Conditions: 150 mM KOAc, 10 mM MgCl2 and 150 mM bicine (pH 8.5), 24 C. Structure probing data (2A3) for a 207-nucleotide construct. Values cover nucleotides 27 to 156. It was measured as part of the RMDB library M2RFPK.

RNA sequence: GGGAACGACUCGAGUAGAGUCGAAAAGAGCAACUUAGGAUUUUAGGCUGCCCGGUGCGUCUCGAACCGCGCCGGGCCAAACCCACAGGGGCUGGCGGUCCUGUGCGGUCAAAAUCUUUCCGCUGGAAUACCUAUCCCAGUUUCGACUGGGAUAGAACCACUACAUCUUCUUCGGAAGAUGUAGUGGAAAAGAAACAACAACAACAAC
Reactivity to 2A3 in 0.01 (KOAc 150mM, MgCl2 10mM, bicine 150mM(pH8.5), 24C), signal-to-noise 2, nucleotides 027 to 156: g010a010g010c040a020a120c070u100u130a100g020g020a100u090u090u100u170a100g070g000c070u030g000c040c020c010g000g010u000g030c020g030u000c090u080c160g100a090a060c000c000g010c000g000c000c000g050g000g010c000c000a000a000a000c000c000c000a000c000a010g000g000g000g020c010u000g000g000c000g030g020u050c020c000u020g000u040g000c180g010g000u020c030a000a030a060a160u050c070u100u160u030c020c000g020c010u010g000g010a110a110u160a160c000c020u000a000u000c000c000c000a010g000u010u050u160c150g060a000c000u010g000g010g000a000u000a000g000a000a000